[RMDB]
RNA sequence: GGGAACGACUCGAGUAGAGUCGAAAAACGAGGCCGUGCCUACUACGGUAGGCACGGCCGCGAAUUACGUUCAUCUACUUAAUCGUAGACGCAUCAAUACAUCAUUCAUGGAACGGGGGAUGGUGAAACUAGAAUCAAACGUUCGCGUUUGAUUCAACUUAAUAGUGGUCUUCGGACCACUAUUAAGAAAAGAAACAACAACAACAAC
Reactivity to 2A3 in 0.01 (KOAc 150mM, MgCl2 10mM, bicine 150mM(pH8.5), 24C), signal-to-noise 2, nucleotides 027 to 156: a000c040g010a080g000g000c000c000g000u000g000c050c000u000a000c010u020a020c160g050g010u000a000g040g080c000a000c030g010g000c000c000g000c000g010a000a000u150u080a020c000g000u030u000c010a020u000c020u000a030c000u080u190a080a050u250c020g010u000a010g010a020c000g020c000a070u110c080a080a160u110a220c000a000u000c010a010u020u010c000a010u040g050g020a000a000c000g000g000g000g000g000a000u000g020g000u000g030a100a020a000c100u140a060g000a010a000u010c000a000a000a000c010g040u070u050c260g010c010g100u010u020u010g000a000u000u000c000a000a000
Reactivity to DMS in 0.01 (KOAc 150mM, MgCl2 10mM, bicine 150mM(pH8.5), 24C), signal-to-noise 1, nucleotides 027 to 156: a150c050g050a020g010g040c030c000g080u020g030c000c010u000a120c030u000a100c300g080g070u000a060g000g000c060a000c000g000g000c010c000g000c020g010a110a160u000u000a060c150g010u020u000c000a250u000c000u000a000c000u000u000a100a130u010c270g000u000a000g010a050c010g000c130a060u000c110a070a090u000a110c050a040u000c010a060u000u000c010a080u000g000g010a110a120c020g010g030g060g040g010a040u010g000g010u000g000a090a080a120c130u000a140g030a060a020u010c010a030a030a010c000g040u000u000c300g020c040g030u000u000u000g000a020u020u010c000a040a040

Source: RMDB library M2RFPK, as collected in RNAgym. The record gives the reactivity of an RNA of 207 nucleotides to 2A3 and DMS. The reactions ran in a buffer of 150 mM KOAc, 10 mM MgCl2 and 150 mM bicine (pH 8.5), at 24 C. Reactivities are given for positions 27 through 156.